[RMDB]
RNA sequence: GGGAACGACUCGAGUAGAGUCGAAAAUUCAGAGCCUUCGGGCUCUGAACCGUUUUCCUUGUUCCCAUUAUUGGUAAGUCGGUAAUAAAAGGAAAGUUGCCGCAACUUGUUCGUUCGCGAACAAGAACUUACCUGUACAUUUCGAUGUACAGGUAAGAAAAGAAACAACAACAACAAC
Reactivity to DMS in 0.01 (KOAc 150mM, MgCl2 10mM, bicine 150mM(pH8.5), 24C), signal-to-noise 4, nucleotides 027 to 126: u000u000c000a010g010a010g010c000c000u010u010c190g040g020g010c000u000c010u000g000a000a020c120c110g010u000u000u000u000c000c020u000u010g010u000u000c000c000c000a160u020u010a090u030u010g020g030u000a020a020g030u010c010g010g000u000a010a020u000a050a070a070a100g000g010a050a050a110g010u000u000g000c010c010g010c040a170a170c000u000u000g000u000u000c000g010u000u000c210g010c000g020a000a010c000a000a000g010a110a170
Reactivity to 2A3 in 0.01 (KOAc 150mM, MgCl2 10mM, bicine 150mM(pH8.5), 24C), signal-to-noise 4, nucleotides 027 to 126: u020u000c000a000g010a000g000c000c020u060u080c290g110g010g000c000u000c000u010g000a000a000c010c020g010u040u020u020u000c010c000u030u070g000u000u000c010c000c040a020u180u220a130u120u150g180g010u070a030a020g050u030c010g000g010u000a010a010u080a030a120a060a030g120g020a130a070a030g020u010u010g000c000c000g000c010a010a040c010u010u010g000u000u000c010g010u030u050c240g000c010g110a000a000c000a000a000g000a020a010